[RMDB]
RNA sequence: GGGAACGACUCGAGUAGAGUCGAAAACAGUUGCGUGGAAAUCGCCAGCCAUCCGGAGGUGAUUUUCUGCACCUUUGGCGAUGCCAUGCGCGUGCCGGGGAAACAGGGUUCUCUGUUGCAGGCUAAAGAUCCGAUAAAUCUUCGGAUUUAUCGGAUCAAAAGAAACAACAACAACAAC
Reactivity to 2A3 in 0.01 (KOAc 150mM, MgCl2 10mM, bicine 150mM(pH8.5), 24C), signal-to-noise 4, nucleotides 027 to 126: c050a030g080u180u170g060c020g000u010g010g010a120a280a030u000c000g010c010c000a030g080c030c020a130u120c060c080g020g020a000g000g020u020g050a140u160u090u180u170c090u200g020c000a010c000c000u110u090u040g000g000c010g000a000u000g030c000c020a010u020g000c000g000c020g070u050g000c010c010g010g030g030g090a020a060a040c020a080g110g040g000u170u040c120u010c000u020g020u020u020g020c060a060g040g000c000u030a030a030a030
Reactivity to DMS in 0.01 (KOAc 150mM, MgCl2 10mM, bicine 150mM(pH8.5), 24C), signal-to-noise 2, nucleotides 027 to 126: c090a100g020u010u000g000c000g050u000g000g010a060a080a010u000c000g040c000c010a080g020c200c060a070u010c070c120g000g020a010g000g030u000g000a080u010u010u020u020c170u040g000c030a030c000c000u000u010u000g010g010c020g010a020u000g000c010c000a010u000g040c010g010c040g000u020g000c030c010g010g010g020g000a080a020a070c110a110g000g000g000u000u010c030u000c020u020g020u010u050g020c060a100g000g030c020u010a040a080a150